[RMDB]
RNA sequence: GGGAACGACUCGAGUAGAGUCGAAAACACGUCUUGACCCAGGAGUUAUAACCCAGCAGUUACAGAUGCUGCUCCCAAAAGCUGCCUAUGUGAAUUUAAAGAACCACUUUGGUUUGGGUAUAGAUCCCAUGACUGAAUCUUUCGAGAUUCAGUCAUGAAAAGAAACAACAACAACAAC
Reactivity to 2A3 in 0.01 (KOAc 150mM, MgCl2 10mM, bicine 150mM(pH8.5), 24C), signal-to-noise 4, nucleotides 027 to 126: c040a000c020g060u020c020u060u150g070a090c010c000c020a030g040g000a020g020u120u100a090u060a190a060c010c020c010a010g020c000a010g050u110u130a090c050a040g110a080u110g020c000u020g000c010u030c010c020c010a060a110a010a010g030c020u040g000c030c010u060a100u100g060u030g060a120a120u110u180u250a150a180a020g020a020a030c020c000a040c070u150u100u120g020g000u060u070u090g000g010g020u030a060u050a090g080a020u020c020c000
Reactivity to DMS in 0.01 (KOAc 150mM, MgCl2 10mM, bicine 150mM(pH8.5), 24C), signal-to-noise 5, nucleotides 027 to 126: c080a070c110g010u000c020u020u000g010a120c030c000c040a130g020g000a070g010u000u000a080u010a120a110c030c030c030a090g020c060a070g000u000u000a300c110a070g000a070u000g010c040u000g020c030u010c030c000c050a040a070a100a110g000c060u010g010c060c040u000a070u010g020u000g010a100a090u000u010u000a050a130a170g010a070a050c040c010a080c260u000u010u000g000g000u000u000u000g010g000g010u010a140u010a090g000a060u000c020c020
Source: RMDB library OK2TRN, as collected in RNAgym. An RNA of 177 nucleotides, treated with 2A3 and DMS and read out base by base. For DMS, 3,499 sequencing reads were counted. For 2A3, 3,026 sequencing reads were counted. The reactions ran in a buffer of 150 mM KOAc, 10 mM MgCl2 and 150 mM bicine (pH 8.5), at 24 C.